[RMDB]
RNA sequence: GGGAACGACUCGAGUAGAGUCGAAAAGUGGCACCGCUGCUGGUCGCACCCAUGGUGCGGCGGGCCGCCGCGACGCUGCCGGCCGCUCAGGCGGUCAAGUUCACCGGUCUGGGCGCCGUGGUGCGGCCUGGCGUCGAUCGUUCGCGAUCGACGCCAGAAAAGAAACAACAACAACAAC
Reactivity to 2A3 in 0.01 (KOAc 150mM, MgCl2 10mM, bicine 150mM(pH8.5), 24C), signal-to-noise 1, nucleotides 027 to 126: g060u060g000g060c040a020c110c040g000c000u020g020c040u060g050g000u000c010g000c000a000c020c010c240a180u300g020g000u040g000c000g050g050c000g000g000g020c100c020g000c030c020g070c030g020a120c060g000c030u070g010c000c020g100g000c010c190g000c000u000c030a000g040g040c000g000g000u040c090a000a110g080u130u180c000a000c090c050g010g150u020c000u000g000g000g000c020g010c000c000g010u010g000g030u030g000c000g000g000c000

The record gives the reactivity of an RNA of 177 nucleotides to 2A3. The RNA was probed in 150 mM KOAc, 10 mM MgCl2 and 150 mM bicine (pH 8.5) at 24 C.